[RMDB]
RNA sequence: GGGAACGACUCGAGUAGAGUCGAAAAGUCAGCACAAGGUCCAUUUUGCCGGCAAGGGGGCCCAGUUCAUCGAGGCCGCCAUAGACCUGCGUGUUGCGAACCCCUGCCCGCUGCAAGCGUUCGUGCACGUAGUGAGGGUAUUCGUACCCUCACUACGAAAAGAAACAACAACAACAAC
Reactivity to DMS in 0.01 (KOAc 150mM, MgCl2 10mM, bicine 150mM(pH8.5), 24C), signal-to-noise 5, nucleotides 027 to 126: g020u020c030a010g010c010a010c040a190a040g010g000u010c020c130a130u010u010u000u010g030c130c040g010g010c070a090a140g000g020g000g010g010c030c030c040a150g010u000u000c160a080u010c080g000a170g010g010c010c000g010c080c040a060u000a070g000a020c020c010u010g010c130g030u000g000u000u000g010c040g000a070a180c060c020c000c060u000g000c040c020c060g010c070u000g000c080a070a080g010c120g010u000u010c050g010u000g010c080a130
Reactivity to 2A3 in 0.01 (KOAc 150mM, MgCl2 10mM, bicine 150mM(pH8.5), 24C), signal-to-noise 4, nucleotides 027 to 126: g020u020c000a010g010c020a020c010a020a040g050g020u020c060c020a070u130u120u130u200g070c040c040g060g000c040a100a150g050g000g000g000g010c000c040c010a050g030u150u160c050a080u160c080g030a060g060g040c010c040g070c030c020a020u050a020g010a020c000c000u040g040c090g060u020g010u020u040g020c000g010a060a070c010c000c000c000u030g040c030c030c020g030c050u040g040c020a040a090g010c020g050u070u100c040g050u100g030c040a010